[RMDB]
Conditions: 150 mM KOAc, 10 mM MgCl2 and 150 mM bicine (pH 8.5), 24 C. This 207-nucleotide RNA was probed chemically with 2A3 and DMS.
RNA sequence: GGGAACGACUCGAGUAGAGUCGAAAAAUGCGGUAGGCAACACUGUCCAUGUGCUGAGAGGUCCCAAGAGACAAUCAGCAGCCGCCUCACCGCGGUCCACAGAUCAAACGACGGUGGCCCAAAGUCCAGCUCGCAGCUGAGUACUACGGGUUAAAAUGUUUAUGAAGAAGUUCGCUUCUUCAUAAACAAAAGAAACAACAACAACAAC
Reactivity to 2A3 in 0.01 (KOAc 150mM, MgCl2 10mM, bicine 150mM(pH8.5), 24C), signal-to-noise 3, nucleotides 027 to 156: a000u130g000c000g000g000u000a000g000g010c010a070a030c010a020c040u020g010u020c030c020a170u190g020u020g030c010u010g000a010g010a020g110g160u030c010c040c040a120a060g040a010g000a020c000a000a080u010c000a010g000c000a000g050c020c110g010c000c000u000c050a040c010c010g000c010g000g000u000c000c000a070c050a060g100a120u120c050a050a080a010c030g020a000c010g040g020u010g020g000c000c000c000a080a040a000g000u000c000c000a000g000c020u050c100g070c070a060g000c020u010g030a020g120u060a000c000u010a000c020g000g000g000u010u020a000a010a000a000u050
Reactivity to DMS in 0.01 (KOAc 150mM, MgCl2 10mM, bicine 150mM(pH8.5), 24C), signal-to-noise 1, nucleotides 027 to 156: a060u000g020c000g070g130u000a030g030g040c030a070a040c030a070c020u000g010u010c040c030a110u020g030u000g020c050u000g010a070g030a250g010g040u000c000c000c090a150a110g020a150g000a030c010a130a160u000c000a010g000c060a070g000c100c030g010c000c060u000c160a070c050c030g010c030g020g000u000c040c030a110c050a050g010a160u010c050a080a110a110c080g020a010c030g040g010u010g000g040c030c020c010a090a280a150g020u000c040c020a100g000c000u000c140g050c040a140g030c010u000g000a170g000u000a000c000u000a060c230g000g030g000u000u000a060a110a080a150u000

For DMS, 1,541 sequencing reads were counted.
2A3 adducts were read by reverse transcription with SuperScript II with manganese.
The 2A3 profile rests on 2,172 reads.